Structure probing data (2A3 and DMS) for a 207-nucleotide construct.
The reactions ran in a buffer of 150 mM KOAc, 10 mM MgCl2 and 150 mM bicine (pH 8.5), at 24 C.
For 2A3 the reverse transcriptase was SuperScript II with manganese.
For 2A3, 2,185 sequencing reads were counted.
RNA sequence: GGGAACGACUCGAGUAGAGUCGAAAAAUGUAGAUCACUGCCAUGGAAGCGGAAAAGUUAGGGCUUUGCUUUGUACUGAGUGCAAUAUGAUGCUUGGCCUUGCCAAAGAUAAUCGUGAUACAUCGUUAGCCGCAAUAGAUUAUCUUGAUGAGCACUCCGUUUUACAUGCUUUCGAGCAUGUAAAACGAAAAGAAACAACAACAACAAC
Reactivity to 2A3 in 0.01 (KOAc 150mM, MgCl2 10mM, bicine 150mM(pH8.5), 24C), signal-to-noise 3, nucleotides 027 to 156: a000u050g040u050a010g010a060u070c020a030c050u030g030c010c020a050u100g080g030a060a050g030c060g040g030a040a080a040a060g080u140u140a070g040g000g010c000u030u030u060g030c030u040u030u080g060u090a050c030u040g010a000g030u010g000c000a040a000u040a080u220g110a020u080g020c000u010u050g000g010c000c020u030u100g010c040c000a040a010a000g020a000u020a020a020u020c010g030u030g060a040u060a130c040a060u050c120g090u060u070a020g080c050c000g000c020a030a030u040a080g000a000u000u000a010u010c020u020u070g060a080u070g030a020g010c000a000c000u030c000
Reactivity to DMS in 0.01 (KOAc 150mM, MgCl2 10mM, bicine 150mM(pH8.5), 24C), signal-to-noise 2, nucleotides 027 to 156: a110u000g010u000a090g010a070u000c070a100c010u000g010c040c030a100u000g020g000a080a090g030c070g040g010a070a040a050a140g000u000u010a090g010g020g020c030u000u000u000g010c020u000u000u010g060u010a050c040u010g000a150g050u000g020c060a060a090u000a040u040g010a030u000g020c040u010u000g020g050c040c050u000u010g010c000c040a110a050a030g010a030u000a010a010u000c020g020u000g060a250u000a060c060a120u010c060g020u000u010a120g030c100c060g010c080a000a090u010a080g000a050u000u000a030u000c010u000u010g010a080u000g000a150g010c050a070c020u010c010